Structure probing data (2A3 and DMS) for a 177-nucleotide construct. Conditions: 150 mM KOAc, 10 mM MgCl2 and 150 mM bicine (pH 8.5), 24 C. It was measured as part of the RMDB library OK2TST.
RNA sequence: GGGAACGACUCGAGUAGAGUCGAAAAAUAUACUAAUCUUAAAGUUGGCCCCUGCACACGGCCAAUGCUUAAGGUUACAUCUUUAACAUAAUGCCUUAAAGCAUAAGUUAAUGCUCUAGACAAAUUAAGUUGUACAAGAGUUCGCUCUUGUACAACUAAAAGAAACAACAACAACAAC
Reactivity to 2A3 in 0.01 (KOAc 150mM, MgCl2 10mM, bicine 150mM(pH8.5), 24C), signal-to-noise 1, nucleotides 027 to 126: a000u090a010u010a080c020u010a000a000u020c010u000u010a040a000a070g000u000u000g010g000c030c020c000c060u150g030c100a080c010a000c100g000g020c000c000a010a000u030g000c020u030u000a000a000g000g000u000u000a010c030a060u100c030u000u020u000a000a020c010a010u230a190a030u130g010c040c000u130u200a140a120a000g020c010a010u050a070a020g010u010u020a040a020u030g000c000u000c040u050a130g080a110c010a060a090a010u100u140a100
Reactivity to DMS in 0.01 (KOAc 150mM, MgCl2 10mM, bicine 150mM(pH8.5), 24C), signal-to-noise 1, nucleotides 027 to 126: a080u000a100u000a150c130u000a000a010u000c010u000u010a000a000a300g000u000u000g000g030c000c000c210c090u000g000c150a130c250a090c220g000g000c000c000a000a020u010g030c180u000u000a010a020g000g020u020u050a030c150a020u000c050u000u000u000a060a010c050a060u000a090a090u010g000c000c020u000u020a040a110a090g000c000a010u010a150a150g000u000u000a070a010u000g020c060u000c040u000a020g000a100c060a030a050a120u000u000a100